Structure probing data (2A3 and DMS) for a 177-nucleotide construct. For 2A3 the reverse transcriptase was SuperScript II with manganese. It was measured as part of the RMDB library OK1LIB. Values cover nucleotides 27 to 126. Conditions: 150 mM KOAc, 10 mM MgCl2 and 150 mM bicine (pH 8.5), 24 C.
RNA sequence: GGGAACGACUCGAGUAGAGUCGAAAAACUCAAUCCGUUGACAUGUUAGCUGUCAAAACAGGCGUUGCUAUUGAACAGCUGCUUUAUGCGAUCCAACAACUGUAUACUGGGUUCCAGGGAAAGCAAACCUCAUCAGAGCUUUCGAGCUCUGAUGAGGAAAAGAAACAACAACAACAAC
Reactivity to 2A3 in 0.01 (KOAc 150mM, MgCl2 10mM, bicine 150mM(pH8.5), 24C), signal-to-noise 2, nucleotides 027 to 126: a000c040u110c040a010a160u000c000c010g010u000u000g040a000c010a150u060g000u130u210a050g000c000u030g000u030c000a010a040a020a100c070a060g140g000c110g010u150u190g010c000u060a060u100u160g070a140a040c030a040g000c000u000g020c030u260u050u050a090u170g070c130g000a040u000c070c020a010a130c010a030a000c250u070g010u130a070u120a070c060u080g010g000g060u060u090c050c040a000g000g000g100a040a220a000g060c000a100a040a110
Reactivity to DMS in 0.01 (KOAc 150mM, MgCl2 10mM, bicine 150mM(pH8.5), 24C), signal-to-noise 1, nucleotides 027 to 126: a000c060u000c020a200a100u130c020c080g000u000u030g000a270c210a110u010g000u000u010a030g000c060u030g000u000c070a000a000a240a070c110a180g000g000c090g000u000u000g060c000u090a080u050u000g000a020a020c100a000g030c030u000g000c040u000u000u040a170u030g010c010g050a080u000c000c060a110a140c220a080a030c170u010g000u010a250u000a000c260u000g000g020g000u000u000c060c090a010g000g000g000a070a090a020g000c170a180a150a010